[RMDB]
RNA sequence: GGGAACGACUCGAGUAGAGUCGAAAAAGAAAUGGACGCAAGCGAAGAUAAAAGCGGAACGGUAACCGCAAUACCGUACGGUCAUGGCACGCGAAAGCGAAAGACCGAAACAUGCCAUACAAAAAAAGAUGAGAUAGCAGUUCGCUGCUAUCUCAUCAAAAGAAACAACAACAACAAC
Reactivity to DMS in 0.01 (KOAc 150mM, MgCl2 10mM, bicine 150mM(pH8.5), 24C), signal-to-noise 1, nucleotides 027 to 126: a030g010a020a070a080u010g000g000a100c020g000c070a010a080g030c030g000a100a080g000a040u000a040a070a150a120g040c000g000g000a040a170c020g020g000u000a090a020c040c030g000c020a090a100u000a150c010c030g020u000a240c100g000g020u000c020a080u000g000g030c040a300c000g000c010g040a080a100a140g000c000g000a040a100a050g000a030c000c000g020a110a040a110c070a060u000g000c000c000a030u020a020c100a000a000a010a080a050a010a120
Reactivity to 2A3 in 0.01 (KOAc 150mM, MgCl2 10mM, bicine 150mM(pH8.5), 24C), signal-to-noise 2, nucleotides 027 to 126: a010g160a020a090a010u150g010g040a010c000g040c050a010a040g040c020g090a070a000g040a120u160a130a120a090a040g040c000g040g000a020a000c020g000g030u030a050a040c030c060g020c160a010a060u030a000c020c010g010u020a050c070g020g030u010c010a010u050g010g000c020a010c030g050c020g020a090a000a020g030c000g060a140a090a040g020a000c030c020g030a010a000a020c090a020u070g010c010c020a020u050a050c070a030a090a040a020a000a000a080